Chemical mapping of a 177-nucleotide RNA with DMS and 2A3.
[RMDB]
RNA sequence: GGGAACGACUCGAGUAGAGUCGAAAAGAUAUGGAUUAGUUGUAGGAACUACUGCAGAAAGUCGGAAACGACUUUCGCAGCCGCAGAUAACUAAUCCUAAGUCAAAACGCCUGGUUCGCCAGGCGAACAAGAUGAGGGAGUUCGCUCCCUCAUCUUGAAAAGAAACAACAACAACAAC
Reactivity to DMS in 0.01 (KOAc 150mM, MgCl2 10mM, bicine 150mM(pH8.5), 24C), signal-to-noise 2, nucleotides 027 to 126: g010a050u000a300u020g000g010a010u010u000a020g010u000u000g000u000a080g010g030a080a080c110u000a220c010u000g010c000a040g050a020a010a010g030u000c010g000g000a070a070a230c030g010a020c000u010u010u000c010g010c000a000g010c080c100g000c040a090g010a020u000a000a010c000u000a010a010u000c000c010u000a030a080g000u000c050a090a030a090a180c020g010c000c000u000g010g020u000u020c160g010c000c020a010g010g010c000g000a020a070
Reactivity to 2A3 in 0.01 (KOAc 150mM, MgCl2 10mM, bicine 150mM(pH8.5), 24C), signal-to-noise 1, nucleotides 027 to 126: g010a010u050a020u150g000g000a000u000u000a000g000u030u040g040u070a170g040g000a070a140c140u300a030c020u300g030c080a280g010a000a010a010g000u020c020g000g080a080a040a060c020g000a010c000u030u000u000c010g010c010a020g000c000c050g160c200a030g040a200u090a030a000c000u000a000a030u000c000c000u010a100a010g080u040c030a040a010a120a140c030g000c020c020u000g000g040u030u050c130g070c040c000a010g000g000c010g000a000a000